Chemical mapping of a 177-nucleotide RNA with 2A3 and DMS. For DMS the reverse transcriptase was MarathonRT.

RNA sequence: GGGAACGACUCGAGUAGAGUCGAAAAAUACAGCGUAAUCGAGCGGAGGAAAACGGCACUCGGAAAAUCCGGUACGAUUAUGAUCCCACUGCGUCGACGCUAGAUGCAGAACCGGAUUGCCGAGGAACCGAUGCUAUGUAUUCGUACAUAGCAUCGGAAAAGAAACAACAACAACAAC
Reactivity to 2A3 in 0.01 (KOAc 150mM, MgCl2 10mM, bicine 150mM(pH8.5), 24C), signal-to-noise 2, nucleotides 027 to 126: a010u150a030c070a010g030c010g020u070a120a020u110c060g020a030g060c050g020g060a060g000g100a010a100a070a000c020g100g000c060a040c090u030c000g000g000a100a240a050a100u000c000c000g000g030u060a070c090g060a060u070u090a080u300g110a040u030c030c020c000a020c000u000g010c010g000u000c010g050a060c070g010c170u040a030g000a010u010g020c020a000g030a030a010c010c000g000g020a010u000u020g010c010c000g000a010g000g000a000a020
Reactivity to DMS in 0.01 (KOAc 150mM, MgCl2 10mM, bicine 150mM(pH8.5), 24C), signal-to-noise 2, nucleotides 027 to 126: a090u010a090c150a010g000c040g000u010a140a090u010c050g000a080g010c060g000g000a100g000g000a050a050a030a080c090g010g010c110a130c020u010c010g000g010a040a090a030a020u000c000c000g010g010u000a130c130g000a050u010u000a070u010g000a090u000c000c000c000a300c020u000g000c010g030u000c000g010a100c120g030c170u000a080g000a010u000g000c000a000g000a050a040c010c000g000g010a010u000u010g000c000c000g000a030g000g010a040a150

Annotation
The RNA was probed in 150 mM KOAc, 10 mM MgCl2 and 150 mM bicine (pH 8.5) at 24 C. The data come from the RNA Mapping Database (RMDB), library M2PK90. For 2A3 the reverse transcriptase was SuperScript II with manganese. The 2A3 profile rests on 2,430 reads.